[RMDB]
RNA sequence: GGGAACGACUCGAGUAGAGUCGAAAACGCAAUCGCAGCUUAAUAACCUGCGCUGAGCCCUUCUCCCCCAGCUUGCCUGUGUCCUAGGGAAUUGGAAGGUCAUCCUUCACAGGAUCGUGUGGAAGUCAUUACUCGUGAGUGUUCGCACUCACGAGAAGUAGAGUUUUACGUUCGCGUAAAACUCUACAAAAGAAACAACAACAACAAC
Reactivity to DMS in 0.01 (KOAc 150mM, MgCl2 10mM, bicine 150mM(pH8.5), 24C), signal-to-noise 2, nucleotides 027 to 156: c060g050c070a070a120u010c020g050c010a050g030c010u000u000a170a090u000a100a090c270c020u000g000c000g020c090u000g000a190g010c030c030c040u000u000c050u000c020c000c000c030c020a070g000c060u010u000g010c030c030u010g020u000g010u010c100c030u000a100g020g000g040a080a170u010u000g020g000a100a040g000g000u000c060a110u000c020c000u000u020c020a160c050a060g010g000a020u000c080g010u000g010u000g000g030a080a210g000u000c030a120u010u000a170c010u000c000g030u000g020a080g010u000g000u000u000c280g040c010a060c000u000c000a000c020g000a010g010a010a080
Reactivity to 2A3 in 0.01 (KOAc 150mM, MgCl2 10mM, bicine 150mM(pH8.5), 24C), signal-to-noise 2, nucleotides 027 to 156: c070g000c010a010a020u040c010g000c020a000g010c010u040u040a040a010u030a040a050c000c020u000g050c020g000c090u040g030a040g020c010c020c000u140u000c050u060c010c020c000c000c000a010g000c040u060u170g010c000c010u000g010u010g020u050c040c000u070a050g010g050g000a060a090u150u060g040g010a030a020g030g020u120c070a060u110c000c020u060u040c030a020c020a030g030g030a090u060c100g030u070g000u050g060g020a030a060g060u050c050a050u080u110a050c000u000c030g000u010g000a000g000u010g000u010u050c150g050c060a000c000u000c000a000c000g000a000g000a000a000
Source: RMDB library M2RFPK, as collected in RNAgym. Structure probing data (DMS and 2A3) for a 207-nucleotide construct. DMS adducts were read by reverse transcription with MarathonRT. For 2A3 the reverse transcriptase was SuperScript II with manganese. The reactions ran in a buffer of 150 mM KOAc, 10 mM MgCl2 and 150 mM bicine (pH 8.5), at 24 C. For DMS, 3,287 sequencing reads were counted.